[RMDB]
RNA sequence: GGGAACGACUCGAGUAGAGUCGAAAAGAGCUGCCAGCACUAAGCCGGACGGCGCCCUCGCACCAGUUCCGCUGUGGGUUCGCCUACAAGAACGUACGGUGUUGAGGCCCUGUCCGCCGCUGCGCUGACCUACAAUGAGGUUCGCCUCAUUGUAGGUAAAAGAAACAACAACAACAAC
Reactivity to 2A3 in 0.01 (KOAc 150mM, MgCl2 10mM, bicine 150mM(pH8.5), 24C), signal-to-noise 3, nucleotides 027 to 126: g080a010g040c060u070g080c100c020a000g010c000a020c080u110a050a030g060c030c010g020g000a000c010g020g000c060g030c050c020c000u000c010g000c000a010c020c000a020g000u010u010c000c020g000c040u000g000u010g030g000g000u020u080c190g090c030c010u020a010c000a030a100g000a020a010c000g020u110a040c090g000g000u020g000u040u300g010a010g010g000c000c000c010u030g000u000c000c010g020c020c000g010c000u010g000c040g000c020u030g040
Reactivity to DMS in 0.01 (KOAc 150mM, MgCl2 10mM, bicine 150mM(pH8.5), 24C), signal-to-noise 4, nucleotides 027 to 126: g000a060g000c060u000g010c120c010a020g000c000a080c060u010a050a040g030c180c010g020g000a020c000g010g020c210g000c200c020c010u000c000g000c000a010c000c000a300g000u000u000c000c010g000c060u000g000u000g000g000g020u000u000c230g020c000c000u020a010c010a050a100g000a030a020c010g000u000a040c300g010g000u000g010u000u010g000a020g020g000c050c160c000u000g010u000c000c010g010c010c300g020c020u000g000c070g000c010u000g000
Chemical mapping of a 177-nucleotide RNA with 2A3 and DMS. Conditions: 150 mM KOAc, 10 mM MgCl2 and 150 mM bicine (pH 8.5), 24 C. 2A3 adducts were read by reverse transcription with SuperScript II with manganese. For DMS the reverse transcriptase was MarathonRT.